[RMDB]
RNA sequence: GGGAACGACUCGAGUAGAGUCGAAAACUUAGGGGAUUGACCAGAUUGCAUCUUGGCAGGUUACAGUUGAUGCAGGGCAGUCGGGAGUUGUAACUGGACAGGGCUGUUUAUCUAAAAUAACUGAGGCUCCUUCAAUGGAAUUCGUUCCAUUGAAGGAAAAAGAAACAACAACAACAAC
Reactivity to DMS in 0.01 (KOAc 150mM, MgCl2 10mM, bicine 150mM(pH8.5), 24C), signal-to-noise 4, nucleotides 027 to 126: c070u000u000a090g020g020g000g010a160u000u000g000a110c060c060a100g020a100u000u000g020c030a110u010c030u000u010g020g010c060a080g010g020u000u010a060c090a060g010u000u000g010a070u000g010c060a050g020g000g010c060a050g020u000c070g020g000g000a110g000u000u000g010u000a080a090c080u000g030g010a080c080a100g010g000g010c050u000g000u010u000u000a060u010c050u010a070a060a070a060u010a040a080c080u010g000a110g020g010c150
Reactivity to 2A3 in 0.01 (KOAc 150mM, MgCl2 10mM, bicine 150mM(pH8.5), 24C), signal-to-noise 1, nucleotides 027 to 126: c010u030u040a020g000g030g000g060a010u030u130g070a160c010c020a050g030a170u010u130g010c020a020u060c010u080u090g090g000c020a050g090g010u060u020a080c020a050g050u110u060g090a040u030g000c010a010g000g000g000c020a040g020u040c000g060g000g000a080g000u100u060g000u040a050a050c040u020g020g050a040c010a030g000g070g060c020u020g010u060u100u080a040u010c020u030a070a050a280a300u100a160a000c050u040g060a010g040g060c010

Chemical mapping of a 177-nucleotide RNA with DMS and 2A3. The data come from the RNA Mapping Database (RMDB), library OK2TRN. The 2A3 profile rests on 1,227 reads. The reactions ran in a buffer of 150 mM KOAc, 10 mM MgCl2 and 150 mM bicine (pH 8.5), at 24 C.